[RMDB]
RNA sequence: GGGAACGACUCGAGUAGAGUCGAAAAUGUCAAUGCAGGAAAUGCAAUGGAUGUCAAUGCAGUCUCCAAAUGUUCCCCACUGUGCAGCUUCCACAUUCCCGAGGUAUUGGGAGGGGACUUGAAUUAACGUAAGGAUGUUGUUCGCAACAUCCUUACGAAAAGAAACAACAACAACAAC
Reactivity to 2A3 in 0.01 (KOAc 150mM, MgCl2 10mM, bicine 150mM(pH8.5), 24C), signal-to-noise 1, nucleotides 027 to 126: u130g010u060c030a000a060u030g000c020a010g000g160a170a130a040u070g000c010a020a060u070g080g060a020u130g060u160c040a050a080u160g000c010a010g090u030c040u020c060c050a090a060a120u210g000u060u000c010c010c010c000a030c040u060g000u080g060c030a030g000c020u060u010c020c000a020c010a150u020u090c000c000c000g020a050g110g020u150a080u150u100g020g000g020a040g020g000g000g000a030c050u040u090g100a060a100u110u040a110a010
Reactivity to DMS in 0.01 (KOAc 150mM, MgCl2 10mM, bicine 150mM(pH8.5), 24C), signal-to-noise 3, nucleotides 027 to 126: u010g010u000c050a090a100u000g000c030a030g010g000a080a070a090u000g020c060a060a080u000g010g000a050u000g030u010c090a070a090u000g020c050a050g010u000c030u000c030c050a050a070a070u010g020u000u000c010c000c010c120a060c130u010g020u000g000c160a060g000c070u000u000c030c020a040c080a100u010u000c010c000c020g010a060g020g010u000a140u010u030g010g000g010a130g000g030g000g020a100c080u000u010g010a100a100u010u010a050a190